[RMDB]
RNA sequence: GGGAACGACUCGAGUAGAGUCGAAAAUCAGCCAUCACGGCUGCCAGCGCUGCUCAGCGGAGAGGACGCAUAGGAAGAAACCCAUCACAAGUUGGUGAUGAGUAUUGCUAUGGAGGGCACACAAAUGCAGGAGAAUACACUUCGGUGUAUUCUCCUGAAAAGAAACAACAACAACAAC
Reactivity to DMS in 0.01 (KOAc 150mM, MgCl2 10mM, bicine 150mM(pH8.5), 24C), signal-to-noise 4, nucleotides 027 to 126: u040c060a060g000c060c000a130u050c150a190c160g000g020c000u000g000c050c020a120g010c040g030c050u000g000c040u010c030a090g050c090g020g020a050g010a080g000g010a070c100g000c030a030u010a020g010g010a060a080g020a150a050a050c020c040c000a010u010c000a030c000a070a160g030u020u020g010g030u010g000a010u010g010a080g000u010a060u000u010g000c000u010a030u010g000g000a080g000g020g000c030a070c080a050c050a020a080a140u050g000
Reactivity to 2A3 in 0.01 (KOAc 150mM, MgCl2 10mM, bicine 150mM(pH8.5), 24C), signal-to-noise 6, nucleotides 027 to 126: u090c000a000g000c000c000a090u220c150a060c130g010g010c000u010g030c010c020a070g000c050g020c020u090g010c000u040c060a070g010c020g010g030a030g020a010g070g060a040c040g000c050a020u030a030g040g050a040a040g040a130a090a010c010c010c000a010u020c000a000c000a020a210g270u300u220g160g000u120g020a000u000g000a000g000u030a080u070u110g040c010u020a030u020g020g010a090g040g000g020c030a020c000a000c020a090a080a050u260g040
This 177-nucleotide RNA was probed chemically with DMS and 2A3. As a SHAPE reagent, 2A3 marks flexible, mostly unpaired nucleotides at the ribose 2'-OH. Source: RMDB library OK1LIB, as collected in RNAgym. The RNA was probed in 150 mM KOAc, 10 mM MgCl2 and 150 mM bicine (pH 8.5) at 24 C.